[RMDB]
RNA sequence: GGGAACGACUCGAGUAGAGUCGAAAAGUAAGUACUCAGGAUUGGCUUUAUCAGCCUUGCCACUGAGCAGCUCAUGGUCCUAUGGAACCUGAGCCAGGCCUCAGUCUCUCCAUGAUUGGCUCAGCUAGAUGACCUGAGAAUUCGUUCUCAGGUCAUCAAAAGAAACAACAACAACAAC
Reactivity to 2A3 in 0.01 (KOAc 150mM, MgCl2 10mM, bicine 150mM(pH8.5), 24C), signal-to-noise 2, nucleotides 027 to 126: g030u040a030a040g000u010a080c020u020c030a010g010g060a130u080u050g060g000c020u000u130u160a160u220c090a000g000c000c000u030u060g040c000c000a140c040u020g000a000g000c010a010g000c010u020c020a060u160g040g000u010c010c020u140a150u110g060g020a100a050c010c010u010g010a030g030c000c030a110g070g050c010c010u010c020a020g080u000c020u000c010u000c030c000a040u060g010a100u050u090g060g000c030u000c020a010g030c040u110a040
Reactivity to DMS in 0.01 (KOAc 150mM, MgCl2 10mM, bicine 150mM(pH8.5), 24C), signal-to-noise 3, nucleotides 027 to 126: g010u000a050a060g010u000a090c020u000c010a020g000g000a170u000u010g010g000c010u000u010u020a090u000c300a090g010c020c000u000u000g010c110c100a170c020u000g010a030g000c030a100g010c040u000c020a040u010g010g010u010c010c020u000a080u000g010g010a050a070c150c010u000g000a010g020c010c090a030g010g020c110c050u010c050a040g010u010c050u010c080u000c030c030a060u010g000a150u000u010g000g000c030u000c060a060g000c170u000a070